This 177-nucleotide RNA was probed chemically with DMS.
RNA sequence: GGGAACGACUCGAGUAGAGUCGAAAAGAUAUGGAUUGAGACUACAGUGCGUUACAGGCAACAGCCGUCAGUCGGAAACGACUGAACGGACAUGCCUUAAACGCACUGUAGUCUCAAUCCUAAGUCACACGUAUAGGAAGUUCGCUUCCUAUACGUGAAAAGAAACAACAACAACAAC
Reactivity to DMS in 0.01 (KOAc 150mM, MgCl2 10mM, bicine 150mM(pH8.5), 24C), signal-to-noise 2, nucleotides 027 to 126: g040a060u010a300u020g020g000a020u010u000g020a010g010a020c000u000a010c010a000g050u000g010c010g000u010u000a220c300a030g010g020c000a040a060c300a180g000c000c000g000u000c000a020g010u020c010g000g000a130a120a190c000g030a000c000u000g000a050a030c020g000g010a050c130a190u000g000c000c010u000u000a120a050a010c000g000c010a000c000u000g020u000a000g000u010c010u000c000a000a000u000c010c020u000a020a020g020u000c040a300
DMS adducts were read by reverse transcription with MarathonRT. The reactions ran in a buffer of 150 mM KOAc, 10 mM MgCl2 and 150 mM bicine (pH 8.5), at 24 C. It was measured as part of the RMDB library TTRINS.